This 177-nucleotide RNA was probed chemically with DMS and 2A3.
The reactions ran in a buffer of 150 mM KOAc, 10 mM MgCl2 and 150 mM bicine (pH 8.5), at 24 C.
[RMDB]
RNA sequence: GGGAACGACUCGAGUAGAGUCGAAAAGAUAUGGAGAUGAACUGACGACGAUCUACCUCAUCUCGGAAACGAGAUGAGGGUAGGGAGUCACCCCAUCUCCUAAGUCAAAGUGAUUGUUCGCAAUCACGGGUAAGGUUAGGUUCGCCUAACCUUACCCAAAAGAAACAACAACAACAAC
Reactivity to DMS in 0.01 (KOAc 150mM, MgCl2 10mM, bicine 150mM(pH8.5), 24C), signal-to-noise 2, nucleotides 027 to 126: g010a030u000a300u000g010g020a010g020a030u000g020a060a060c300u000g000a050c090g000a100c130g000a280u010c010u000a020c000c000u000c000a000u000c000u010c000g000g000a030a050a110c020g010a010g000a000u000g000a040g000g000g000u010a000g050g000g000a260g000u010c000a100c060c020c150c080a010u010c010u000c000c010u000a010a090g000u010c030a110a090a170g010u000g000a010u000u000g030u000u010c290g020c020a020a020u000c000a020c010
Reactivity to 2A3 in 0.01 (KOAc 150mM, MgCl2 10mM, bicine 150mM(pH8.5), 24C), signal-to-noise 2, nucleotides 027 to 126: g060a030u080a050u250g010g000a010g000a020u020g000a050a130c230u130g070a040c040g040a080c000g040a090u000c010u020a000c000c000u000c010a000u000c000u010c000g010g030a070a100a030c010g010a010g010a020u000g020a050g000g050g000u000a000g000g000g000a020g000u000c000a010c010c000c000c000a000u000c000u040c030c000u010a140a040g070u070c100a140a030a160g010u020g020a010u010u040g070u090u250c300g050c210a010a000u010c000a000c050